[RMDB]
RNA sequence: GGGAACGACUCGAGUAGAGUCGAAAAGAUAUGGAAGCUGAGGGGAGCUGGUAGAUCGGAAACGAUCUACCCAGCAUCGAUCUGUGCGCUUCCUAAGUCAAAAGUGUUGCCGUUCGCGGCAACACAACAAGUUAUAUGCGUUCGCGCAUAUAACUUGAAAAGAAACAACAACAACAAC
Reactivity to DMS in 0.01 (KOAc 150mM, MgCl2 10mM, bicine 150mM(pH8.5), 24C), signal-to-noise 4, nucleotides 027 to 126: g010a010u000a040u010g000g010a010a020g010c010u000g010a220g000g010g010g010a010g060c000u010g000g000u000a000g000a000u000c000g010g000a010a010a030c000g020a000u000c000u000a000c110c050c080a000g020c010a300u010c180g010a020u010c000u000g000u020g010c260g000c010u000u000c000c000u010a010a110g000u010c010a090a100a080a130g000u000g000u000u000g000c000c010g020u000u010c270g020c020g010g010c000a010a000c000a000c000a070a130
Reactivity to 2A3 in 0.01 (KOAc 150mM, MgCl2 10mM, bicine 150mM(pH8.5), 24C), signal-to-noise 2, nucleotides 027 to 126: g010a000u010a010u040g000g000a010a010g000c040u050g030a240g080g010g000g010a020g000c000u000g040g000u010a010g000a010u010c000g000g000a010a010a000c000g010a000u000c010u000a000c020c030c000a000g000c000a020u300c020g000a000u000c010u050g120u160g110c170g010c070u000u000c000c010u000a010a000g020u000c020a000a000a110a160g010u020g000u020u010g000c030c000g020u050u100c300g000c020g130g000c000a000a000c010a000c000a000a010